Structure probing data (DMS and 2A3) for a 177-nucleotide construct. The data come from the RNA Mapping Database (RMDB), library OK2TRN. DMS adducts were read by reverse transcription with MarathonRT. The 2A3 profile rests on 1,951 reads. 2A3 adducts were read by reverse transcription with SuperScript II with manganese. 2A3 is a SHAPE reagent: it acylates the 2'-hydroxyl of flexible nucleotides of all four kinds.
RNA sequence: GGGAACGACUCGAGUAGAGUCGAAAAUGUGAGUACACUAGUCUAGCAUGAGUACCGAGACUAGUCAUGUGUCCAUGACUACAUGAUGGUACAUAUAGGAUCAUACAUGGUACCGCGUACGUACCCACCCUUCUGCCUGGUUCGCCAGGCAGAAGGGAAAAGAAACAACAACAACAAC
Reactivity to DMS in 0.01 (KOAc 150mM, MgCl2 10mM, bicine 150mM(pH8.5), 24C), signal-to-noise 2, nucleotides 027 to 126: u000g010u020g020a120g020u020a050c070a090c010u000a080g050u000c010u000a050g000c030a020u010g010a190g000u000a070c060c060g030a060g010a060c160u000a000g000u010c010a040u010g010u010g040u010c160c080a040u000g000a030c020u010a060c030a070u000g020a110u000g000g020u000a000c050a080u000a070u000a130g000g010a100u000c160a100u000a120c040a040u010g020g000u010a030c060c060g030c040g010u010a030c130g000u000a070c030c000c000a130
Reactivity to 2A3 in 0.01 (KOAc 150mM, MgCl2 10mM, bicine 150mM(pH8.5), 24C), signal-to-noise 2, nucleotides 027 to 126: u140g040u000g040a060g090u040a000c080a050c100u060a030g020u000c040u030a060g000c040a110u170g110a040g080u030a070c050c030g000a030g040a110c010u000a040g000u000c010a000u040g190u120g110u140c080c050a030u110g010a010c010u040a010c050a060u140g030a060u190g030g030u040a030c050a010u150a010u050a100g120g010a070u080c030a050u070a170c060a070u170g040g000u010a010c010c020g000c040g020u040a080c030g020u070a050c000c000c000a040